[RMDB]
An RNA of 177 nucleotides, treated with DMS and read out base by base.
RNA sequence: GGGAACGACUCGAGUAGAGUCGAAAAGCGAGUUUGUUCGCAAACUCGCAAAGAAAGCUCGAGCGAAGGGAACCCAAACCACGCUCCAGCAAGGGACCCAAAAAAUCUACGGCUUCGGCCGUAGAAAGAUUUUAUUUAUGUUCGCAUAAAUAAAAUCAAAAGAAACAACAACAACAAC
Reactivity to DMS in 0.01 (KOAc 150mM, MgCl2 10mM, bicine 150mM(pH8.5), 24C), signal-to-noise 3, nucleotides 027 to 126: g010c010g000a010g010u000u000u000g010u000u020c170g010c000a020a000a010c000u020c020g010c010a020a060a100g000a140a100a090g010c010u000c300g000a010g010c000g020a160a080g020g010g000a100a150c090c050c080a070a100a100c000c000a270c010g000c000u000c000c070a010g030c020a060a130g020g000g000a140c020c010c000a000a020a090a060a090a190u010c000u000a000c000g010g000c000u000u010c240g020g030c000c000g000u000a000g000a030a060a060